[RMDB]
RNA sequence: GGGAACGACUCGAGUAGAGUCGAAAACCUAUCUGGUUUUUGUCACUACACUCACUAGUGAUUAUACGAUUACAGUCUUUGUUACUGUCAACCUUGCAAAAGUUUGCACUUAUGCCAUCUUUGCUUACUGAAUCACAGAGUUCGCUCUGUGAUUCAGAAAAGAAACAACAACAACAAC
Reactivity to DMS in 0.01 (KOAc 150mM, MgCl2 10mM, bicine 150mM(pH8.5), 24C), signal-to-noise 1, nucleotides 027 to 126: c000c000u000a080u010c090u010g030g030u010u030u000u010u000g000u010c020a020c010u010a050c090a130c110u010c110a070c100u010a060g000u020g000a070u000u020a060u000a080c100g000a110u000u000a050c030a030g020u010c030u010u000u010g020u010u030a070c010u010g010u000c130a030a010c040c050u000u000g020c010a020a000a030a030g010u020u000u000g010c040a100c300u020u000a070u000g020c050c100a030u010c030u000u010u020g010c020u010u000a190
Reactivity to 2A3 in 0.01 (KOAc 150mM, MgCl2 10mM, bicine 150mM(pH8.5), 24C), signal-to-noise 2, nucleotides 027 to 126: c010c000u010a020u080c110u070g180g000u030u050u000u110u130g020u000c000a010c030u040a010c040a040c080u140c010a050c060u000a000g030u000g010a000u000u110a070u010a080c050g020a040u020u120a050c000a000g000u010c070u080u240u170g070u160u090a020c010u010g030u030c020a050a030c000c020u020u090g020c030a000a020a000a120g030u000u000u060g040c070a030c040u210u030a070u220g000c000c000a030u000c010u040u000u020g020c010u010u030a060

The data come from the RNA Mapping Database (RMDB), library 15KREP. The record gives the reactivity of an RNA of 177 nucleotides to DMS and 2A3. For 2A3, 1,370 sequencing reads were counted. For DMS, 1,032 sequencing reads were counted. Values cover nucleotides 27 to 126. 2A3 is a SHAPE reagent: it acylates the 2'-hydroxyl of flexible nucleotides of all four kinds. For 2A3 the reverse transcriptase was SuperScript II with manganese.